[RMDB]
This 177-nucleotide RNA was probed chemically with 2A3 and DMS. For DMS, 6,376 sequencing reads were counted. 2A3 adducts were read by reverse transcription with SuperScript II with manganese. Reactivities are rounded to 0.1 and cut off at 0 and 3. For 2A3, 2,681 sequencing reads were counted.
RNA sequence: GGGAACGACUCGAGUAGAGUCGAAAAUUAAUCCGGCUAUAAGUUGACGAGGGCAGGGUUUAUCGAGACAUCGGCGGGUGCCCUGCGGUCUUCCUGCGACCGUUAGAGGACUGGUAAACCAAUUUAACACUUACUGAAGUUUCGACUUCAGUAAGUGAAAAGAAACAACAACAACAAC
Reactivity to 2A3 in 0.01 (KOAc 150mM, MgCl2 10mM, bicine 150mM(pH8.5), 24C), signal-to-noise 2, nucleotides 027 to 126: u070u060a030a030u040c040c000g020g040c030u080a050u040a300a140g050u070u130g070a030c020g010a050g020g030g040c020a020g050g020g020u010u090u060a060u080c050g010a030g030a090c040a060u060c040g030g010c010g030g040g020u040g010c020c000c000u020g000c000g000g000u000c000u050u050c020c020u030g020c020g030a050c020c000g010u010u050a040g010a090g030g030a040c010u030g050g030u080a060a060a070c000c020a000a000u040u070u090a070a010
Reactivity to DMS in 0.01 (KOAc 150mM, MgCl2 10mM, bicine 150mM(pH8.5), 24C), signal-to-noise 5, nucleotides 027 to 126: u000u010a090a110u010c020c010g000g010c050u000a080u010a070a110g010u000u000g000a070c090g010a090g010g000g020c050a050g010g000g000u000u000u000a030u000c060g000a130g000a100c110a070u000c050g010g010c060g000g010g020u010g000c010c020c030u010g000c030g000g000u000c020u000u000c060c030u000g000c150g010a030c010c010g010u000u010a050g000a120g010g000a090c060u010g010g010u000a040a060a100c050c040a080a100u000u000u000a070a180